An RNA of 177 nucleotides, treated with DMS and 2A3 and read out base by base. Values cover nucleotides 27 to 126. The reactions ran in a buffer of 150 mM KOAc, 10 mM MgCl2 and 150 mM bicine (pH 8.5), at 24 C.
[RMDB]
RNA sequence: GGGAACGACUCGAGUAGAGUCGAAAAGGCUGGACGGGUACGGACUGCAGAUCAUCGAGCGGGUGCCGCUUCCGGUGCGGGCCAACGCGGAUAACAUCCGUUACUUGAUGACCAAGCGUGACAAGAAGAGGGGUAAUAUGUUCGCAUAUUACCCCUCAAAAGAAACAACAACAACAAC
Reactivity to DMS in 0.01 (KOAc 150mM, MgCl2 10mM, bicine 150mM(pH8.5), 24C), signal-to-noise 4, nucleotides 027 to 126: g010g030c010u000g000g000a060c040g010g010g000u010a050c060g000g010a070c140u010g000c070a120g010a070u000c040a030u000c040g000a090g030c070g000g000g020u000g000c010c010g010c020u000u010c130c110g020g030u000g000c080g000g000g000c060c050a070a140c110g020c000g000g000a030u000a070a240c030a300u000c000c000g000u000u010a080c060u000u000g010a090u000g000a040c020c010a030a100g000c020g000u010g010a140c190a090a100g010a090a140
Reactivity to 2A3 in 0.01 (KOAc 150mM, MgCl2 10mM, bicine 150mM(pH8.5), 24C), signal-to-noise 2, nucleotides 027 to 126: g040g000c020u010g000g040a010c040g050g000g000u050a010c020g000g020a010c030u060g000c060a050g010a150u050c020a000u060c010g040a000g050c020g000g040g000u070g050c000c000g010c000u110u010c070c050g110g030u100g010c040g020g000g030c000c030a020a010c040g000c000g010g030a030u020a040a050c010a070u020c010c000g000u030u000a050c020u030u050g030a040u020g050a020c010c010a060a050g060c020g100u070g050a070c070a070a050g070a090a000